[RMDB]
RNA sequence: GGGAACGACUCGAGUAGAGUCGAAAAGGAGAUCGAAGACGACUUCACGAUACCGACGUCAGCACGGUCAGGAUGUAGGUCCGCAUGCAUCCAAGUUGACGAAUUCCAAAGCGGACAAGAAGUCAAAGGCUACCAUCUAGUUCGCUAGAUGGUAGCCAAAAGAAACAACAACAACAAC
Reactivity to 2A3 in 0.01 (KOAc 150mM, MgCl2 10mM, bicine 150mM(pH8.5), 24C), signal-to-noise 2, nucleotides 027 to 126: g070g000a060g030a070u000c000g010a150a070g130a130c110g140a150c040u000u000c000a000c010g020a000u010a000c000c000g020a040c040g000u020c000a000g030c030a050c090g100g140u080c050a090g040g040a000u020g000u050a010g040g000u010c000c000g000c000a030u010g000c000a000u030c000c000a060a010g010u030u030g000a000c040g050a060a090u000u060c000c000a020a040a130g000c000g000g110a000c010a020a030g060a030a020g050u110c160a100a000a030